[RMDB]
RNA sequence: GGGAACGACUCGAGUAGAGUCGAAAACAUCAGUGGUUCAAGAAAAUCAUCGAGCUUACCCCACUCUGACGAGACAACUUCAUCCAGUUUGUCGAUUAUCCGUUGCUGGAUAUCAGAAUCUAACUGCGAGAACUGGUUUUCAGCUCGGGGCGAAAACAAAGGAAAGAUUCUUCGGAAUCUUUCCUUUAAAAGAAACAACAACAACAAC
Reactivity to DMS in 0.01 (KOAc 150mM, MgCl2 10mM, bicine 150mM(pH8.5), 24C), signal-to-noise 1, nucleotides 027 to 156: c080a120u000c070a090g020u000g020g050u020u000c060a090a190g010a150a120a080a110u010c000a020u000c030g000a070g020c020u000u010a210c000c020c020c070a090c050u000c030u020g050a080c120g020a120g000a020c040a040a120c030u000u000c080a160u000c030c050a040g000u000u000u000g020u000c000g020a130u000u000a100u020c030c000g020u000u000g010c110u000g030g020a070u000a040u000c110a050g000a100a100u010c030u000a050a040c040u020g010c070g030a210g000a040a210c020u000g020g000u000u000u010u000c020a070g020c020u010c070g040g010g020g030c070g000a060a090a090a030c130
Reactivity to 2A3 in 0.01 (KOAc 150mM, MgCl2 10mM, bicine 150mM(pH8.5), 24C), signal-to-noise 1, nucleotides 027 to 156: c010a100u030c070a040g080u070g010g010u100u000c050a130a000g100a070a130a000a060u050c050a010u030c080g090a000g050c030u030u130a090c000c000c040c000a030c010u000c050u160g080a010c070g120a070g010a130c050a040a000c040u140u170c040a180u050c070c010a050g000u010u040u010g160u120c000g040a030u060u180a070u140c030c040g040u030u190g030c050u040g040g000a000u000a000u000c000a000g080a090a040u050c010u030a020a060c070u140g100c100g120a010g090a090a100c000u000g020g020u000u000u000u000c010a000g000c000u030c030g030g010g070g010c040g120a030a110a000a000c080
The record gives the reactivity of an RNA of 207 nucleotides to DMS and 2A3.
Conditions: 150 mM KOAc, 10 mM MgCl2 and 150 mM bicine (pH 8.5), 24 C.
Source: RMDB library OK3TST, as collected in RNAgym.
For 2A3 the reverse transcriptase was SuperScript II with manganese.
For 2A3, 346 sequencing reads were counted.